Structure probing data (2A3) for a 207-nucleotide construct. Source: RMDB library OK3TST, as collected in RNAgym. The reactions ran in a buffer of 150 mM KOAc, 10 mM MgCl2 and 150 mM bicine (pH 8.5), at 24 C.
RNA sequence: GGGAACGACUCGAGUAGAGUCGAAAACUGGAAGGGGAUCGACUGGAAGGGGCAGUGUCGGUUUGUUUGUGGAAUGCCGUUUUGUAAGUUUCUUAUGCAUGCGACUUCAAACAUAGUUCGGCAUCGAAACUUUCUAGCACACCGACACACAUACGAAGCAUCCGUGACCGUUCGCGGUCACGGAUGCAAAAGAAACAACAACAACAAC
Reactivity to 2A3 in 0.01 (KOAc 150mM, MgCl2 10mM, bicine 150mM(pH8.5), 24C), signal-to-noise 1, nucleotides 027 to 156: c080u040g180g010a050a010g010g000g000g000a060u040c080g150a100c040u060g040g090a070a030g040g000g030g010c050a030g000u000g000u000c000g020g030u000u030u010g050u070u020u070g010u000g010g000a170a000u030g000c010c030g000u040u000u010u120g060u110a040a000g000u050u050u010c020u050u190a110u050g070c070a060u100g010c060g050a050c000u020u070c030a020a090a080c040a110u140a120g150u100u060c000g000g000c010a010u020c060g040a020a020a020c010u110u090u000c030u070a000g060c010a000c000a000c010c000g000a000c030a000c000a000c030a050u080a130c090g000a050a000